RNA sequence: GGGAACGACUCGAGUAGAGUCGAAAAUUUACUGCAGAACGUCCUCGUGAAGGUAAGUCCAUAAAAGAAAAGAUGAGUGAAAUUGUUGGGCUGGGUACUGAUCUUGGACCAAGAAGUAGAAAUCCACAAGGUUUAGUCCGAUUAUAUUACGCGAUAGGCAUAUCGCAGAUUUCGAUCUGCGAUAUGCAAAAGAAACAACAACAACAAC
Reactivity to 2A3 in 0.01 (KOAc 150mM, MgCl2 10mM, bicine 150mM(pH8.5), 24C), signal-to-noise 2, nucleotides 027 to 156: u010u100u060a050c010u020g050c000a060g010a100a020c040g040u010c000c040u050c000g090u100g020a080a020g000g020u130a010a050g040u000c000c020a050u150a160a190a040a000g100a020a110a000a070g070a060u120g040a040g040u060g040a020a110a200u140u120g040u040u030g000g000g000c020u000g010g010g110u090a040c010u020g000a000u000c000u020u030g000g000a000c000c000a040a030g030a120a050g000u110a000g070a040a010a030u030c010c020a030c000a090a030g000g020u060u130u100a040g010u040c010c000g000a000u050u100a090u080a010u060u120a060c080g000c010g090a040u040a070g150
Reactivity to DMS in 0.01 (KOAc 150mM, MgCl2 10mM, bicine 150mM(pH8.5), 24C), signal-to-noise 2, nucleotides 027 to 156: u000u000u020a100c030u010g020c040a200g000a110a120c040g030u000c010c020u010c110g050u000g010a290a040g050g000u000a030a060g020u000c070c040a120u010a030a120a090a210g000a100a130a110a090g030a080u020g000a140g050u000g000a050a170a130u020u000g040u010u000g010g040g040c040u010g040g050g030u000a090c080u020g000a090u010c040u000u000g010g020a110c060c040a060a190g000a060a080g050u000a060g010a080a020a080u000c020c010a040c040a020a060g000g000u000u000u000a040g010u000c040c020g000a080u010u000a120u000a120u010u000a080c130g000c000g000a080u010a150g030